[RMDB]
RNA sequence: GGGAACGACUCGAGUAGAGUCGAAAACAAGUUGGCUUCGGCCAACUUGAAAAGAAUGGUAGACUGAGACCGCUAAACUCAGAUAACCAAAAAUUGCGGAAAAAAGAUCAGUGUUCGCACUGAUCAACAGAAUAGUAGCCUUCGGGCUACUAUUCUGAAAAGAAACAACAACAACAAC
Reactivity to DMS in 0.01 (KOAc 150mM, MgCl2 10mM, bicine 150mM(pH8.5), 24C), signal-to-noise 1, nucleotides 027 to 126: c010a000a060g000u000u000g020g000c010u000u020c160g030g000c010c000a000a000c000u010u010g000a030a150a070a160g000a080a090u000g000g030u000a020g020a140c020u000g010a010g000a160c040c100g020c040u010a060a080a100c000u000c000a010g000a020u010a080a110c020c020a000a010a070a090a040u010u000g050c020g000g040a000a020a060a050a100a140g000a020u000c000a000g030u000g000u020u000c220g020c000a000c000u000g000a000u000c000a040a090
Reactivity to 2A3 in 0.01 (KOAc 150mM, MgCl2 10mM, bicine 150mM(pH8.5), 24C), signal-to-noise 1, nucleotides 027 to 126: c020a000a000g010u020u000g010g050c000u020u200c280g090g050c020c000a000a000c010u000u030g020a030a000a000a000g120a060a060u120g030g020u090a020g080a180c000u010g010a000g070a120c000c060g040c140u130a110a070a010c000u010c010a000g020a070u170a080a050c010c020a100a000a000a030a040u100u090g010c020g030g000a000a050a000a050a090a000g000a000u000c010a000g000u010g050u070u050c120g050c030a010c020u000g010a000u010c000a000a000

Description: Structure probing data (DMS and 2A3) for a 177-nucleotide construct. It was measured as part of the RMDB library M2PK50. The 2A3 profile rests on 1,213 reads.